[RMDB]
RNA sequence: GGGAACGACUCGAGUAGAGUCGAAAAAUAAAGAGCGUCGCACACACACAGACUAAGUCUGACACUGACAGACGCUAAACCGCUCUGUCAGUGUGCGAGAUAUCGGUAUUAAAUAGAGCGCAAAAAACAUUAGUUUAGGUUUCGACCUAAACUAAUGAAAAGAAACAACAACAACAAC
Reactivity to DMS in 0.01 (KOAc 150mM, MgCl2 10mM, bicine 150mM(pH8.5), 24C), signal-to-noise 9, nucleotides 027 to 126: a050u000a050a060a070g000a060g010c090g020u000c020g010c030a050c070a070c150a120c150a140c050a030g000a030c040u000a110a130g010u000c000u000g000a090c070a030c070u010g000a020c010a010g000a020c090g030c050u010a020a070a120c240c100g000c090u000c000u000g000u000c000a000g010u000g010u000g010c040g000a040g000a090u000a050u000c050g010g010u000a050u000u010a030a070a100u010a080g000a080g010c040g010c060a000a030a060a060a050a090
Reactivity to 2A3 in 0.01 (KOAc 150mM, MgCl2 10mM, bicine 150mM(pH8.5), 24C), signal-to-noise 6, nucleotides 027 to 126: a000u130a010a080a010g070a010g040c050g050u030c010g020c010a010c000a010c000a000c000a000c000a040g040a020c060u170a230a040g020u000c010u020g030a030c010a000c040u000g010a000c000a000g000a010c060g000c020u020a100a070a020c050c030g010c050u000c000u000g000u000c000a010g010u010g000u010g010c010g020a040g030a010u100a040u070c030g020g040u070a070u100u180a110a090a060u140a050g050a030g020c050g000c070a040a050a040a030a020a020